RNA sequence: GGGAACGACUCGAGUAGAGUCGAAAAACGGAAGGGCCGUGGUACUCCCUUCAACAGGCGGCACCCAGUGAGGCUCGCCAAUCCAUAUGACUAGGAUUAUGCUGAGUGAUACCCCCUUUCGAACGUACCCUCCCUGGCUAUUCGUAGCCAGGGAGGGAAAAGAAACAACAACAACAAC
Reactivity to 2A3 in 0.01 (KOAc 150mM, MgCl2 10mM, bicine 150mM(pH8.5), 24C), signal-to-noise 2, nucleotides 027 to 126: a000c010g010g020a000a000g080g000g000c030c050g180u130g000g020u000a030c040u080c040c040c000u030u020c050a020a030c020a020g040g020c000g010g020c000a040c020c010c010a110g090u160g180a150g020g180c100u100c100g000c020c030a000a020u050c010c000a060u100a100u270g160a160c090u090a090g000g010a080u100u040a020u150g050c040u050g010a000g010u090g000a060u040a090c050c000c000c000c000u000u040u030c090g050a050a060c060g000u080a050

The data come from the RNA Mapping Database (RMDB), library OK1LIB. This 177-nucleotide RNA was probed chemically with 2A3. For 2A3 the reverse transcriptase was SuperScript II with manganese. For 2A3, 943 sequencing reads were counted. The reactions ran in a buffer of 150 mM KOAc, 10 mM MgCl2 and 150 mM bicine (pH 8.5), at 24 C.